[RMDB]
Chemical mapping of a 207-nucleotide RNA with 2A3 and DMS. For 2A3 the reverse transcriptase was SuperScript II with manganese. For DMS the reverse transcriptase was MarathonRT. The DMS profile rests on 3,625 reads.
RNA sequence: GGGAACGACUCGAGUAGAGUCGAAAAAGACCACCUCUACGGAGGUGGUCAAGUCACGUAGCUAGUACCAGGUUGCAAUACUAGAACGUUAGUCCUGGGGCGUACGGUGGCAGUACGCUGCCACCGAUAAAACUUGAAUACUUCGGUAUUCAAGUAACGAUAGAGUGGAGUUCGCUCCACUCUAUCGAAAAGAAACAACAACAACAAC
Reactivity to 2A3 in 0.01 (KOAc 150mM, MgCl2 10mM, bicine 150mM(pH8.5), 24C), signal-to-noise 2, nucleotides 027 to 156: a000g000a000c000c000a000c000c020u040c000u050a120c260g080g000a020g020g000u000g000g000u000c000a000a010g010u000c010a000c010g000u000a020g040c020u000a000g020u020a150c000c020a010g030g030u040u030g040c020a000a020u020a000c000u000a000g000a070a010c060g120u140u140a030g040u170c000c000u020g010g010g010g060c120g040u170a090c030g000g010u010g030g000c020a000g040u030a010c210g000c100u010g020c010c000a000c010c010g010a000u010a000a090a010a000c010u000u000g000a000a000u000a010c000u030u050c150g090g010u000a000u000u000c000a000a000g000u000a020a060
Reactivity to DMS in 0.01 (KOAc 150mM, MgCl2 10mM, bicine 150mM(pH8.5), 24C), signal-to-noise 2, nucleotides 027 to 156: a150g000a030c000c010a010c010c000u000c020u000a150c270g070g000a030g020g050u000g020g000u000c010a000a010g020u000c080a130c050g020u000a050g020c000u000a010g010u000a060c060c040a080g020g000u020u000g000c030a100a050u000a010c020u000a010g020a140a070c010g030u000u000a070g000u000c020c010u020g000g010g020g040c150g010u000a060c000g000g010u010g030g040c010a030g000u000a100c220g030c010u000g000c000c010a010c010c000g000a020u000a010a080a110a090c030u000u000g000a020a000u010a020c030u000u000c300g020g010u000a020u000u000c000a010a000g020u000a000a040